[RMDB]
RNA sequence: GGGAACGACUCGAGUAGAGUCGAAAAGAUAUGGAUUCACACUCCGAAGAACUACUUGUCGGAAACGAUUUCGAAGUAGGGAGGAGCGUGAAUCCUAAGUCAAAACAUACAUGUUCGCAUGUAUGAACCUCAUUAUUUCCUUCGGGAAAUAAUGAGGAAAAGAAACAACAACAACAAC
Reactivity to 2A3 in 0.01 (KOAc 150mM, MgCl2 10mM, bicine 150mM(pH8.5), 24C), signal-to-noise 4, nucleotides 027 to 126: g030a000u020a010u060g000g000a000u000u000c010a000c000a020c010u000c010c020g140a300a280g000a100a000c010u010a000c000u050u070g050u070c000g000g000a010a030a030c050g060a120u050u260u300c210g110a020a010g010u000a020g050g050g040a160g000g020a000g010c000g000u020g000a000a010u010c000c000u000a010a000g000u000c020a000a000a100a140c000a000u010a000c000a000u020g050u050u120c300g000c160a000u010g000u010a010u010g070a030a050
Reactivity to DMS in 0.01 (KOAc 150mM, MgCl2 10mM, bicine 150mM(pH8.5), 24C), signal-to-noise 3, nucleotides 027 to 126: g000a020u000a130u000g000g000a010u000u000c000a020c000a040c000u000c000c000g000a170a160g020a150a090c000u000a000c000u000u000g000u000c000g010g000a020a030a030c030g000a030u000u010u010c230g010a030a010g040u000a010g000g000g010a030g010g000a010g020c040g030u000g000a000a000u000c000c000u000a000a030g000u000c010a070a080a100a270c000a000u000a010c000a010u000g020u000u000c240g040c010a000u000g000u020a000u000g010a090a140